RNA sequence: GGGAACGACUCGAGUAGAGUCGAAAAGAUAUGGAUUCGGUACUUUUGACGCCUAGUAUGCGUCGGAAACGACGCAUAGGGCGAUAAGUAUGCGAAUCCUAAGUCAAAAGUGGCCUUCGGGCCACAAGACUUUAAAUAGGUUCGCCUAUUUAAAGUCAAAAGAAACAACAACAACAAC
Reactivity to 2A3 in 0.01 (KOAc 150mM, MgCl2 10mM, bicine 150mM(pH8.5), 24C), signal-to-noise 5, nucleotides 027 to 126: g030a030u090a070u190g000g000a010u010u010c000g000g000u010a000c000u070u110u150u200g300a190c040g010c000c010u050a110g170u040a060u010g010c010g010u010c000g000g010a030a040a010c000g010a000c000g010c010a010u010a000g000g000g000c000g000a000u010a010a000g000u020a010u160g300c000g000a010a000u000c000c000u000a020a020g030u000c020a000a000a060a240g010u010g010g020c000c020u040u070c300g080g000g000c030c000a010c000a000a000
Reactivity to DMS in 0.01 (KOAc 150mM, MgCl2 10mM, bicine 150mM(pH8.5), 24C), signal-to-noise 6, nucleotides 027 to 126: g010a060u000a300u010g000g010a020u000u000c000g000g010u000a000c010u000u000u010u020g010a200c090g010c000c000u000a120g020u000a010u000g000c000g010u000c000g010g010a100a110a250c010g010a020c000g010c000a010u000a090g000g000g010c000g020a040u000a010a020g010u000a000u000g020c010g000a010a000u000c000c000u000a020a120g010u000c040a100a110a110a170g000u000g010g010c010c000u000u010c220g020g010g010c010c000a010c010a030a090